[RMDB]
An RNA of 177 nucleotides, treated with DMS and 2A3 and read out base by base.
The 2A3 profile rests on 4,522 reads.
The DMS profile rests on 9,816 reads.
Reactivities are rounded to 0.1 and cut off at 0 and 3.
As a SHAPE reagent, 2A3 marks flexible, mostly unpaired nucleotides at the ribose 2'-OH.
The reactions ran in a buffer of 150 mM KOAc, 10 mM MgCl2 and 150 mM bicine (pH 8.5), at 24 C.
For DMS the reverse transcriptase was MarathonRT.
RNA sequence: GGGAACGACUCGAGUAGAGUCGAAAAUACUCGGACAAUGGUUAUGACGCCUACACCUUCGGCACAUGCCAGGGCCAGAGGUUUGAGAAGCAGCCCGUUCAGAUUGUCGUCAGCAAUAGCACCGCCAUAGAUUAUCUGGGUUCGCCCAGAUAAUCUAAAAAGAAACAACAACAACAAC
Reactivity to DMS in 0.01 (KOAc 150mM, MgCl2 10mM, bicine 150mM(pH8.5), 24C), signal-to-noise 5, nucleotides 027 to 126: u030a060c030u000c010g020g010a060c050a080a050u010g000g010u000u010a040u000g020a080c100g010c030c020u010a100c160a080c030c040u010u010c090g020g020c010a060c070a050u020g010c040c050a080g000g000g000c020c020a080g000a040g020g020u010u000u000g010a150g000a130a070g000c070a070g020c040c010c030g010u010u020c080a070g010a060u020u010g010u000c040g010u020c050a050g010c050a040a040u000a080g010c030a060c030c020g010c050c070a120
Reactivity to 2A3 in 0.01 (KOAc 150mM, MgCl2 10mM, bicine 150mM(pH8.5), 24C), signal-to-noise 6, nucleotides 027 to 126: u160a030c010u010c010g020g020a030c050a080a170u100g030g030u190u200a050u160g100a090c070g020c010c010u060a080c020a120c040c040u090u190c070g020g000c000a040c030a110u180g030c030c000a040g010g020g030c000c010a040g010a040g040g100u060u120u150g160a140g010a030a010g060c040a010g010c000c000c000g010u040u050c010a040g020a150u060u110g030u060c020g030u030c010a020g000c020a040a110u020a120g020c010a030c020c030g030c020c000a060